[RMDB]
RNA sequence: GGGAACGACUCGAGUAGAGUCGAAAAGCAUUGCUGCCGACGAAAGGACGGAGCCUCGGCAAAAGCUGUCUAUAUAUAGGCAGGAAAGCGGAAACAUGACAAGGGUGCAGUCUAUCAUAGGAGAGUAGAUAGGCACAGUAUUCGUACUGUGCCUAUCAAAAGAAACAACAACAACAAC
Reactivity to DMS in 0.01 (KOAc 150mM, MgCl2 10mM, bicine 150mM(pH8.5), 24C), signal-to-noise 5, nucleotides 027 to 126: g010c080a080u040u010g010c070u010g000c040c010g010a150c220g020a080a090a110g030g000a080c050g010g010a190g010c040c030u010c050g000g000c050a050a050a090a090g000c010u000g010u000c000u010a050u030a120u030a100u010a030g010g000c000a010g010g000a010a020a050g000c040g000g000a100a080a090c130a080u020g010a070c090a090a110g000g020g010u010g010c080a090g010u000c040u000a120u000c040a080u020a110g000g010a060g000a060g020u010a100
Reactivity to 2A3 in 0.01 (KOAc 150mM, MgCl2 10mM, bicine 150mM(pH8.5), 24C), signal-to-noise 7, nucleotides 027 to 126: g030c040a090u050u200g010c010u070g030c030c010g040a080c020g080a090a090a090g050g010a030c020g020g050a010g030c000c020u030c020g070g000c000a060a080a000a010g030c010u000g010u000c010u000a050u000a020u010a010u040a160g020g010c010a000g020g050a030a050a000g020c020g030g030a030a120a020c070a100u170g060a030c020a080a090g060g000g010u050g000c020a010g010u020c030u050a050u050c030a040u080a050g050g050a030g010a010g050u100a040
Overview
This 177-nucleotide RNA was probed chemically with DMS and 2A3. The data come from the RNA Mapping Database (RMDB), libraries RFM100 and RFMREP. Values are in units of 0.01, from 0 to 300, in steps of 10. DMS adducts were read by reverse transcription with MarathonRT. Conditions: 150 mM KOAc, 10 mM MgCl2 and 150 mM bicine (pH 8.5), 24 C.